[RMDB]
RNA sequence: GGGAACGACUCGAGUAGAGUCGAAAACGCUGGGUUGUAAUGACGUAUGUUGUCAGCUGAAGCGCGCACGGCUUGGAUUUACAUACCUCUCAUACAACCUGUGCUGAAGCGCGCACGGCAACCGAAAGGUGCGAAAAGGAAGGGUUCGCCCUUCCAACGUAUGGCUUAAGUUCGCUUAAGCCAUACGAAAAGAAACAACAACAACAAC
Reactivity to 2A3 in 0.01 (KOAc 150mM, MgCl2 10mM, bicine 150mM(pH8.5), 24C), signal-to-noise 8, nucleotides 027 to 156: c030g010c010u030g000g000g010u020u000g020u020a130a130u030g020a050c300g000u010a020u020g040u040u080g210u140c170a020g000c000u030g030a150a050g000c000g000c000g000c020a020c040g010g010c010u080u210g180g040a080u190u160u130a010c010a000u010a010c000c010u020c000u010c010a000u000a000c000a000a010c000c000u000g000u010g000c000u030g030a160a050g010c010g000c000g000c010a010c010g020g000c010a020a010c010c000g030a070a040a030g010g000u030g010c030g050a070a050a020a060g010g000a010a000g040g010g010u060u160c200g150c010c010c020u000u000c000c010a000a000
Reactivity to DMS in 0.01 (KOAc 150mM, MgCl2 10mM, bicine 150mM(pH8.5), 24C), signal-to-noise 2, nucleotides 027 to 156: c080g050c020u000g010g020g020u010u000g010u000a050a070u000g030a030c120g000u000a030u010g000u000u000g040u020c070a100g010c000u010g010a080a100g020c010g040c010g000c030a300c060g000g010c010u010u000g030g000a170u000u000u000a050c020a040u000a040c010c010u000c000u000c010a100u000a030c010a000a010c020c000u000g020u000g010c010u000g000a080a070g040c020g040c010g020c020a300c080g000g000c020a050a070c010c020g020a080a090a150g030g010u000g020c030g000a100a090a140a190g000g010a040a010g010g010g020u000u010c130g020c000c010c010u000u000c000c000a000a050